[RMDB]
Structure probing data (2A3 and DMS) for a 207-nucleotide construct. DMS adducts were read by reverse transcription with MarathonRT. Source: RMDB library M2RFPK, as collected in RNAgym. The reactions ran in a buffer of 150 mM KOAc, 10 mM MgCl2 and 150 mM bicine (pH 8.5), at 24 C. For 2A3, 2,601 sequencing reads were counted.

RNA sequence: GGGAACGACUCGAGUAGAGUCGAAAAGAAACUCGUUUCGCGUUGGCUGCCUAGUUCAAGGAAUUAGCGUGCCUUCAUGCUAAGGGUUUGAUAUCUGCUAAAACCCGGUGCAUUCAUCAAUGCAGGUCUCAUCCAAAUGCCUUCGGGCAUUUGGAAAGUCUGUCUGUACAUUCGUGUACAGACAGACAAAAGAAACAACAACAACAAC
Reactivity to 2A3 in 0.01 (KOAc 150mM, MgCl2 10mM, bicine 150mM(pH8.5), 24C), signal-to-noise 3, nucleotides 027 to 156: g060a030a070a000c020u020c050g060u040u140u080c090g010c010g020u010u020g010g010c040u050g060c040c000u020a020g000u010u030c110a220a100g140g030a080a030u010u010a020g060c060g060u050g000c010c000u020u050c030a040u050g000c010u030a030a020g000g000g000u010u020u020g000a010u010a030u000c010u020g000c010u020a010a010a010a050c010c000c020g030g000u040g000c050a100u060u270c030a060u100c090a120a160u140g000c010a020g000g050u030c040u070c040a070u010c010c000a000a000a000u010g010c000c000u050u070c110g070g000g000c000a000u000u000u000g000g000a010a000a000
Reactivity to DMS in 0.01 (KOAc 150mM, MgCl2 10mM, bicine 150mM(pH8.5), 24C), signal-to-noise 2, nucleotides 027 to 156: g000a120a120a070c050u000c020g010u010u000u010c030g020c050g020u010u000g020g000c040u000g000c150c000u000a060g000u030u000c040a190a210g040g020a050a140u000u010a010g030c040g050u010g000c060c030u000u000c020a120u000g040c010u000a270a180g000g020g010u010u000u000g020a160u000a090u020c110u010g000c080u010a070a010a010a060c020c000c030g000g030u000g040c030a030u000u000c020a090u000c080a140a140u000g010c010a100g010g010u000c080u020c050a300u000c000c000a000a000a010u000g000c010c000u000u000c300g070g050g010c010a010u000u000u000g010g040a020a030a060